[RMDB]
RNA sequence: GGGAACGACUCGAGUAGAGUCGAAAAGUUCUGCUCUCGCUGCCUAAUGGCGGUGCGGGAAACCCACUCUAAAGUCCUUAGGGUUAGCCCCUUAAGGCGGGGUUCGGAGGCACCUGGCAACAGAAGCUGAAACUGUGCACAUUCGUGUGCACAGUAACGUGGACUAAAAAUUCGUUUUUAGUCCACGAAAAGAAACAACAACAACAAC
Reactivity to DMS in 0.01 (KOAc 150mM, MgCl2 10mM, bicine 150mM(pH8.5), 24C), signal-to-noise 2, nucleotides 027 to 156: g010u000u010c030u020g010c000u000c020u000c020g000c000u040g050c020c020u000a160a170u010g040g040c000g040g020u010g010c080g050g030g030a020a080a110c000c000c100a120c070u000c100u010a110a030a130g000u020c020c010u000u000a020g000g020g000u010u000a220g020c180c300c000c000u000u000a010a050g020g080c000g000g000g020g000u010u000c040g010g020a260g000g020c020a080c020c030u000g000g000c020a060a060c020a050g030a060a060g000c050u010g010a120a030a070c010u010g010u000g000c010a010c000a060u000u010c230g000u000g020u000g020c010a020c000a010g010u000a010a040
Reactivity to 2A3 in 0.01 (KOAc 150mM, MgCl2 10mM, bicine 150mM(pH8.5), 24C), signal-to-noise 7, nucleotides 027 to 156: g020u060u020c020u090g070c010u010c030u050c030g010c000u040g020c020c040u300a300a200u230g020g000c010g010g060u030g000c010g010g000g000a040a030a030c020c000c010a070c040u190c070u160a160a130a300g300u040c000c000u000u000a000g000g030g000u030u080a040g010c000c020c010c010u010u040a010a000g000g000c000g010g000g000g000u040u180c090g100g020a010g030g020c010a000c000c000u040g300g000c000a010a000c000a020g000a010a000g000c010u020g010a090a000a000c000u000g000u000g000c000a000c000a020u030u120c240g110u050g000u000g010c000a000c000a000g000u000a000a000